RNA sequence: GGGAACGACUCGAGUAGAGUCGAAAAAGGGCUUGGUGACCUCAAGAUAGGCCAGGCUUCUGGGACAAAAAGGCCAUGCCAGCUGGCCAGUGCACCGCUAAAGGGAAUUGAAGCUGACCUUGCAGAGCAUCCCGUAAGUUUUCGAACUUACGGGAUGAAAAGAAACAACAACAACAAC
Reactivity to 2A3 in 0.01 (KOAc 150mM, MgCl2 10mM, bicine 150mM(pH8.5), 24C), signal-to-noise 2, nucleotides 027 to 126: a020g030g000g000c020u030u020g040g000u060g090a100c030c010u040c020a100a060g050a210u120a040g080g000c000c000a020g030g010c000u110u020c020u020g000g000g030a030c030a040a150a020a110a080g030g000c010c000a000u060g040c000c010a030g000c040u010g030g000c000c000a000g010u030g000c010a020c090c030g010c040u100a130a010a050g080g030g020a040a040u080u090g030a070a000g000c020u010g010a040c000c020u030u060g020c030a020g040a030g130
Reactivity to DMS in 0.01 (KOAc 150mM, MgCl2 10mM, bicine 150mM(pH8.5), 24C), signal-to-noise 5, nucleotides 027 to 126: a080g000g010g010c020u000u010g020g010u000g010a140c070c020u000c100a080a080g020a130u010a070g000g010c020c020a050g010g010c040u000u010c030u000g000g000g020a130c090a040a050a070a080a130g010g010c030c020a050u000g000c030c030a050g020c130u000g000g000c020c020a070g020u000g010c080a120c030c040g000c100u010a070a110a110g000g010g010a090a100u010u000g000a050a070g010c060u010g000a080c050c020u000u000g020c130a100g000a140g020